[RMDB]
RNA sequence: GGGAACGACUCGAGUAGAGUCGAAAAUCCUACGGGAAUCCCCCGGUUCCCCUUAUGUCCAGCCCCUCCCCGGUCCGAGAGAAGGGGGACUCCGGGACUCCUUGCAUGUUGGGGACGAAGCCGCCCCUUGACUGCCACUUCGGUGGCAGUAAAAGAAACAACAACAACAAC
Reactivity to 2A3 in 0.01 (KOAc 150mM, MgCl2 10mM, bicine 150mM(pH8.5), 24C), signal-to-noise 1, nucleotides 027 to 129: u000c000c000u020a060c030g050g000g030a000a080u070c030c020c000c000c000g020g030u000u000c030c000c000c000u060u040a060u180g050u000c000c020a010g020c120c000c020c030u100c000c000c000c000g070g030u080c020c020g070a020g000a000g070a180a000g020g000g000g000g000a020c050u030c080c000g000g000g000a000c000u010c010c000u000u080g060c070a060u170g030u150u040g040g010g010g020a020c060g100a110a000g060c000c070g000c000c000c000c030u000u080g040
Reactivity to DMS in 0.01 (KOAc 150mM, MgCl2 10mM, bicine 150mM(pH8.5), 24C), signal-to-noise 5, nucleotides 027 to 129: u020c000c000u010a100c190g040g050g000a190a020u000c020c020c010c140c300g000g000u000u040c040c010c030c080u050u030a100u100g020u020c040c050a120g020c100c030c040c060u030c050c000c020c140g020g000u020c060c120g020a100g000a160g030a010a030g000g000g060g010g000a020c040u030c220c300g050g030g000a070c000u010c010c060u000u030g060c100a060u060g100u100u020g000g030g060g030a150c070g040a060a080g050c070c060g050c050c000c040c040u000u000g020
The record gives the reactivity of an RNA of 170 nucleotides to 2A3 and DMS. The reactions ran in a buffer of 150 mM KOAc, 10 mM MgCl2 and 150 mM bicine (pH 8.5), at 24 C. For 2A3 the reverse transcriptase was SuperScript II with manganese. For DMS, 8,832 sequencing reads were counted. DMS adducts were read by reverse transcription with MarathonRT. Source: RMDB library 15KLIB, as collected in RNAgym.